[RMDB]
This 177-nucleotide RNA was probed chemically with 2A3. For 2A3 the reverse transcriptase was SuperScript II with manganese. The reactions ran in a buffer of 150 mM KOAc, 10 mM MgCl2 and 150 mM bicine (pH 8.5), at 24 C.
RNA sequence: GGGAACGACUCGAGUAGAGUCGAAAAGAGUGGUUCGCCACUCAAAAAGAUAUGGAGAAUGUUUCGACAGUAUUCGGAAACGAAUAUACUGUGCAUCUCCUAAGUCAAAAACCCUCUUCGGAGGGAACUACGCAUCAUGGUUCGCCAUGAUGCGUAGAAAAGAAACAACAACAACAAC
Reactivity to 2A3 in 0.01 (KOAc 150mM, MgCl2 10mM, bicine 150mM(pH8.5), 24C), signal-to-noise 1, nucleotides 027 to 126: g010a000g010u040g060g030u030u170c300g100c090c000a010c000u000c000a030a130a000a000a000g060a030u090a010u080g010g050a010g030a190a270u060g030u050u210u240c130g010a020c000a000g040u090a020u010u010c000g040g000a050a140a020c020g020a020a000u220a010u030a130c020u040g000u030g040c000a010u000c010u000c010c010u030a180a030g040u030c010a040a020a040a150a260c020c050c000u040c020u010u040c260g210g000a050g020g000g010a000a020